The record gives the reactivity of an RNA of 177 nucleotides to 2A3. The data come from the RNA Mapping Database (RMDB), library OK1LIB. For 2A3 the reverse transcriptase was SuperScript II with manganese. The reactions ran in a buffer of 150 mM KOAc, 10 mM MgCl2 and 150 mM bicine (pH 8.5), at 24 C.

RNA sequence: GGGAACGACUCGAGUAGAGUCGAAAAGAAAAGACGAUGUUAUUAUGAUUCUCGAGUAAUAGCAGGUCAUGCGUACUACUCGCCGAACGGAAGGCGGACUGUUCGCGAAAUGAAACGAGGAAGAAAAGAUGAUCGGAGCGUUCGCGCUCCGAUCAUCAAAAGAAACAACAACAACAAC
Reactivity to 2A3 in 0.01 (KOAc 150mM, MgCl2 10mM, bicine 150mM(pH8.5), 24C), signal-to-noise 1, nucleotides 027 to 126: g100a000a070a000a010g000a040c000g030a150u000g000u000u000a000u000u000a000u000g060a060u200u000c000u000c010g050a000g000u030a010a010u000a000g000c000a000g010g060u090c120a050u040g010c000g050u000a000c060u000a030c000u030c060g000c000c000g000a220a130c140g000g070a030a030g040g000c160g000g070a000c080u050g000u000u030c000g000c000g040a070a120a240u260g020a000a000a090c000g040a060g110g020a060a100g040a030a060a030a030